[RMDB]
RNA sequence: GGGAACGACUCGAGUAGAGUCGAAAACGCUGGGAUGAGUGGCUAUGUCUGAGACAUGAUACAAUGUCACUGAAGCGCGCACGGUGACAUUGUAUCAACAGCUCAGACUAAGGCCACCCAUCCUGUGCUGAAGCGCGCACGGCAACCGAAAGGUGCGGAUUACCAAUCGCUUCGGCGAUUGGUAAUCAAAAGAAACAACAACAACAAC
Reactivity to 2A3 in 0.01 (KOAc 150mM, MgCl2 10mM, bicine 150mM(pH8.5), 24C), signal-to-noise 2, nucleotides 027 to 156: c040g010c020u060g000g000g000a000u010g020a000g030u010g010g010c010u040a060u210g000u020c010u020g020a020g030a080c130a280u300g000a000u010a000c000a010a000u000g000u010c010a000c000u010g010a160a030g050c020g000c000g010c010a010c000g030g010u000g010a010c000a000u030u030g000u000a000u000c000a000a000c030a020g000c010u010c000a000g000a000c000u010a030a010g020g000c000c000a000c000c000c000a000u000c010c000u000g010u010g000c020u040g060a160a040g020c010g000c010g060c010a030c000g010g000c030a060a120c040c010g070a200a000a030g050g000u020g010c020g080
The record gives the reactivity of an RNA of 207 nucleotides to 2A3. Values cover nucleotides 27 to 156. For 2A3 the reverse transcriptase was SuperScript II with manganese. Source: RMDB library RNAMAK, as collected in RNAgym.